[RMDB]
RNA sequence: GGGAACGACUCGAGUAGAGUCGAAAACGCGGGAUUUACAGAGACGGCCGAGAAGCGUCUCUGAUCUCGGCCACCGCGGACGUCAACCUGGACGCACAGGAAUAGUUACACUUCGGUGUAGCGAAAAGGGAAUGACGGACUUCGGUCCGUCGUUCCCAAAAGAAACAACAACAACAAC
Reactivity to 2A3 in 0.01 (KOAc 150mM, MgCl2 10mM, bicine 150mM(pH8.5), 24C), signal-to-noise 4, nucleotides 027 to 126: c050g010c040g020g010g070a080u140u140u110a140c080a050g070a050g090a050c110g030g050c020c050g070a040g020a090a040g220c060g120u130c070u030c050u140g030a030u010c010u000c000g010g000c000c000a010c000c000g010c000g010g030a010c030g040u040c000a040a040c010c010u030g020g040a050c050g060c090a040c030a070g090g000a060a050u090a060g010u000u000a000c010a000c000u040u060c180g030g010u000g000u000a010g000c000g010a050a010a020a030
Reactivity to DMS in 0.01 (KOAc 150mM, MgCl2 10mM, bicine 150mM(pH8.5), 24C), signal-to-noise 2, nucleotides 027 to 126: c020g040c020g000g000g000a210u020u020u000a280c210a100g000a110g000a060c100g010g020c000c020g000a010g050a180a130g000c070g000u010c040u040c140u030g000a000u000c000u010c000g000g000c000c040a140c000c000g020c000g000g020a080c070g000u040c100a070a130c050c020u010g000g000a070c080g040c200a070c110a020g000g010a060a070u020a080g000u000u000a000c000a000c010u000u070c190g020g000u000g000u000a000g000c010g000a020a060a030a050